Chemical mapping of a 177-nucleotide RNA with DMS. The reactions ran in a buffer of 150 mM KOAc, 10 mM MgCl2 and 150 mM bicine (pH 8.5), at 24 C. DMS adducts were read by reverse transcription with MarathonRT.
[RMDB]
RNA sequence: GGGAACGACUCGAGUAGAGUCGAAAAGGAUGCCCGGCAACGGGACGCCCGGCGCCGGUACGGGAUGCUCGGCGGGGGGUCUCGGCACGCAGCCGCGCCCAGCACAGGACCGCGCACCCGGGACCCGCAAGCAUGCGGAUUUCGAUCCGCAUGCUUGAAAAGAAACAACAACAACAAC
Reactivity to DMS in 0.01 (KOAc 150mM, MgCl2 10mM, bicine 150mM(pH8.5), 24C), signal-to-noise 1, nucleotides 027 to 126: g030g020a120u000g000c060c010c030g040g030c250a120a170c030g010g000g000a020c100g010c000c000c000g030g110c300g040c010c070g030g030u000a010c010g010g000g020a190u030g020c010u000c220g020g030c040g010g020g000g000g000g020u030c040u000c020g000g020c000a100c180g010c170a120g000c040c010g000c300g000c000c020c050a040g000c060a080c050a250g020g010a010c000c010g030c110g030c000a080c160c010c030g010g010g010a150c020c010c040g030